RNA sequence: GGGAACGACUCGAGUAGAGUCGAAAAAUUGUUUGCCCACGUUUGGCAUCAAUACGCGAUACUGGCGGCGUAGCAGUAAAAGGGACUGUAAUACUGCCAGGCUCAGCGUUGUCAUCGCCAGUAUCUAAGUACAUGAACGGUUCGCCGUUCAUGUACUAAAAGAAACAACAACAACAAC
Reactivity to DMS in 0.01 (KOAc 150mM, MgCl2 10mM, bicine 150mM(pH8.5), 24C), signal-to-noise 3, nucleotides 027 to 126: a070u010u010g000u010u000u000g000c000c000c080a180c300g020u000u000u010g030g000c030a000u000c080a070a030u000a050c120g040c160g030a040u000a010c010u010g000g020c000g010g000c150g000u000a220g000c030a030g000u010a010a050a110a090g000g000g000a070c020u010g000u010a150a170u030a070c070u000g030c040c030a020g000g000c080u020c090a100g020c060g010u000u030g000u010c090a080u000c110g030c020c030a010g010u000a000u000c050u010a040
Reactivity to 2A3 in 0.01 (KOAc 150mM, MgCl2 10mM, bicine 150mM(pH8.5), 24C), signal-to-noise 2, nucleotides 027 to 126: a000u110u060g050u090u020u060g040c010c050c000a140c100g040u070u170u120g050g000c000a020u000c030a060a040u080a130c050g000c040g060a000u020a010c000u000g000g000c010g000g000c030g020u060a040g000c000a000g010u180a020a060a100a210g110g040g000a020c010u030g040u040a100a000u030a090c030u020g000c020c030a010g000g000c000u030c040a050g020c020g030u010u040g000u060c020a050u030c040g000c010c000a000g020u050a030u020c050u030a040